[RMDB]
RNA sequence: GGGAACGACUCGAGUAGAGUCGAAAAGAUAUGGAUUUAAGGGAGCGACUAGUGCCACUUCGGAAACGAAUGCACUACUCGCGUUGAUCUUAAAUCCUAAGUCAAAACAACAGGUUCGCCUGUUGAAGAUACACUUCCCGUUCGCGGGAAGUGUAUCAAAAGAAACAACAACAACAAC
Reactivity to DMS in 0.01 (KOAc 150mM, MgCl2 10mM, bicine 150mM(pH8.5), 24C), signal-to-noise 2, nucleotides 027 to 126: g000a040u000a300u010g010g000a030u000u000u000a010a010g020g000g010a020g020c040g000a030c160u000a000g020u000g000c000c080a000c130u000u000c000g010g000a080a080a210c000g000a050a020u010g000c010a010c000u020a000c170u000c020g010c000g030u000u000g000a010u020c000u000u000a000a000a000u000c000c000u010a000a070g000u010c050a070a060a160a150c000a040a000c020a000g000g000u000u010c280g020c030c000u000g010u000u000g000a050a060
Reactivity to 2A3 in 0.01 (KOAc 150mM, MgCl2 10mM, bicine 150mM(pH8.5), 24C), signal-to-noise 1, nucleotides 027 to 126: g060a020u060a020u120g000g020a010u010u030u000a030a000g000g000g000a020g010c040g000a010c010u000a010g000u000g010c020c060a150c070u040u000c000g000g060a100a050a020c000g000a040a040u300g000c000a000c010u000a000c020u010c010g050c010g000u130u010g000a000u000c000u000u000a000a020a000u000c000c000u000a080a000g030u010c000a020a020a090a210c020a000a000c010a000g030g040u030u060c110g170c090c000u050g020u000u000g010a040a080